An RNA of 177 nucleotides, treated with DMS and read out base by base. Reactivities are given for positions 27 through 126.
[RMDB]
RNA sequence: GGGAACGACUCGAGUAGAGUCGAAAAUGUCACACAGUAGCGAGGGAUGCAAUUAAUUGCAUCUUCACCAAGCUCAAGGCUUGGAUUUCGACUAGUGUCGAGUCGUUCCCACUCGCUACGCCCACAAAGUAAGAAUCCCAUUCGUGGGAUUCUUACUAAAAGAAACAACAACAACAAC
Reactivity to DMS in 0.01 (KOAc 150mM, MgCl2 10mM, bicine 150mM(pH8.5), 24C), signal-to-noise 2, nucleotides 027 to 126: u010g030u000c100a170c230a180c100a100g010u000a030g010c010g030a010g000g000g010a010u000g000c010a030a050u000u010a100a130u010u010g020c000a000u010c000u010u000c080a120c010c000a000a010g020c000u010c260a130a050g000g000c000u000u000g010g000a270u010u000u000c000g000a010c000u010a030g000u000g000u010c000g000a000g000u000c000g000u000u000c000c000c000a000c010u000c000g010c000u010a000c010g000c040c010c030a060c180a060a070
The data come from the RNA Mapping Database (RMDB), library M2PK90.